RNA sequence: GGGAACGACUCGAGUAGAGUCGAAAAAAAAAGAGCGUAAUCGCGUCAUUGAGUGACGUGAAGAUCAUCCAAGUGUGCUGUCUACAGUGGUAGAUAGCGCACAAUACGCUGAUGAUCAUUCAAAAAACAAAUAAUCCCAGUUCGCUGGGAUUAUUUGAAAAGAAACAACAACAACAAC
Reactivity to DMS in 0.01 (KOAc 150mM, MgCl2 10mM, bicine 150mM(pH8.5), 24C), signal-to-noise 3, nucleotides 027 to 126: a030a030a060a050a030g000a020g000c000g010u010a070a070u000c010g020c000g000u000c000a050u000u000g000a120g010u000g000a000c000g000u010g000a030a080g000a010u000c020a010u000c000c140a120a090g030u000g000u000g000c000u000g010u000c000u000a000c010a210g020u020g010g000u010a010g000a000u000a000g010c010g010c000a000c010a050a040u010a210c070g000c050u000g000a010u010g000a000u010c010a220u010u000c080a000a040a080a060a060a070
Reactivity to 2A3 in 0.01 (KOAc 150mM, MgCl2 10mM, bicine 150mM(pH8.5), 24C), signal-to-noise 3, nucleotides 027 to 126: a000a010a000a000a000g090a010g020c060g090u100a050a050u060c010g000c000g010u000c010a020u100u300g180a120g250u040g000a010c030g010u010g020a020a010g000a020u010c010a000u000c020c020a090a110g020u000g000u010g000c000u000g000u000c000u000a010c010a240g150u240g230g030u220a000g000a010u000a000g010c000g000c010a000c000a000a000u060a030c010g000c040u060g000a000u010g010a000u010c010a050u090u080c080a040a080a030a020a010a050